[RMDB]
RNA sequence: GGGAACGACUCGAGUAGAGUCGAAAAAGAUCCACGCUACGUCGUGGAUCACACGUUCAUCCCUAUUGGGACGGAAGUAGGCAUAGUGCCGAAGGAACGCAUUAGUCAUGCGCUACGGCGCAUGACACACAUCAGAGUCACUUCGGUGACUCUGAAAUCAUCGACUAUACUUCGGUAUAGUCGAUGAAAAAGAAACAACAACAACAAC
Reactivity to 2A3 in 0.01 (KOAc 150mM, MgCl2 10mM, bicine 150mM(pH8.5), 24C), signal-to-noise 4, nucleotides 027 to 156: a000g010a000u000c000c000a010c000g000c020u300a080c140g220u280c000g000u070g000g000a000u000c000a000c010a000c000g000u020u010c000a030u070c000c010c010u150a300u150u300g010g000g000a010c030g020g000a010a020g000u010a030g010g010c050a090u120a230g160u140g120c000c000g010a000a020g030g020a020a000c000g040c040a060u020u220a000g010u000c000a000u010g000c000g000c000u020a040c270g070g000c000g000c030a000u000g000a000c000a000c000a000c000a090u030c000a000g000a000g010u000c000a000c020u040u130c240g070g010u000g000a000c000u010c000u000g000a000a000a000
Reactivity to DMS in 0.01 (KOAc 150mM, MgCl2 10mM, bicine 150mM(pH8.5), 24C), signal-to-noise 1, nucleotides 027 to 156: a190g000a020u000c000c000a010c000g060c030u000a010c250g000u000c010g020u000g010g010a000u010c060a000c060a020c030g030u010u010c010a140u020c010c010c010u010a140u000u010g010g000g020a000c010g060g000a060a110g020u000a160g020g020c050a180u000a150g020u020g010c020c000g000a070a140g050g010a110a050c030g010c010a060u010u000a140g000u010c070a080u000g000c050g060c010u000a130c300g000g060c000g060c030a010u000g000a050c000a040c080a030c120a140u000c000a060g000a020g010u000c000a030c020u020u000c300g150g000u000g000a000c000u020c010u010g000a000a010a030
This 207-nucleotide RNA was probed chemically with 2A3 and DMS. The reactions ran in a buffer of 150 mM KOAc, 10 mM MgCl2 and 150 mM bicine (pH 8.5), at 24 C.